An RNA of 177 nucleotides, treated with DMS and 2A3 and read out base by base.
The data come from the RNA Mapping Database (RMDB), library M2PK50.
High DMS reactivity at an A or C suggests that its Watson-Crick edge is free.
DMS adducts were read by reverse transcription with MarathonRT.

RNA sequence: GGGAACGACUCGAGUAGAGUCGAAAAUAGCAGUCUUUCGAGACUGCUACAUUAAUAGUCGCUAGAAAACGAUCAAAACUAGCGACUAACUUAACGAUCGAAAAGACGCACCCUUCGGGGUGCGUAACACCUAACGAACAUUCGUGUUCGUUAGGUGAAAAGAAACAACAACAACAAC
Reactivity to DMS in 0.01 (KOAc 150mM, MgCl2 10mM, bicine 150mM(pH8.5), 24C), signal-to-noise 2, nucleotides 027 to 126: u000a000g010c000a000g020u000c010u000u010u000c190g050a020g030a010c000u000g000c010u000a000c060a040u000u000a110a150u000a010g000u000c000g020c000u000a010g000a050a020a060a100c060g020a040u010c030a140a090a100a110c010u000a010g010c000g030a000c000u000a000a030c090u000u000a070a100c290g000a010u000c030g000a180a040a110a200g000a000c010g000c000a000c000c010c000u000u010c180g030g000g000g020u000g000c000g010u000a010a090
Reactivity to 2A3 in 0.01 (KOAc 150mM, MgCl2 10mM, bicine 150mM(pH8.5), 24C), signal-to-noise 2, nucleotides 027 to 126: u060a000g000c000a000g000u010c040u030u070u090c190g100a010g000a010c000u000g000c010u010a000c000a010u010u020a010a040u030a040g000u020c000g000c000u020a010g030a140a120a050a110c070g000a110u060c050a010a070a040a080c000u000a000g030c010g000a010c000u000a000a000c000u050u100a050a060c090g060a060u080c010g030a020a050a020a080g160a010c010g000c010a000c000c010c010u030u060c250g080g030g000g000u010g010c000g000u000a000a010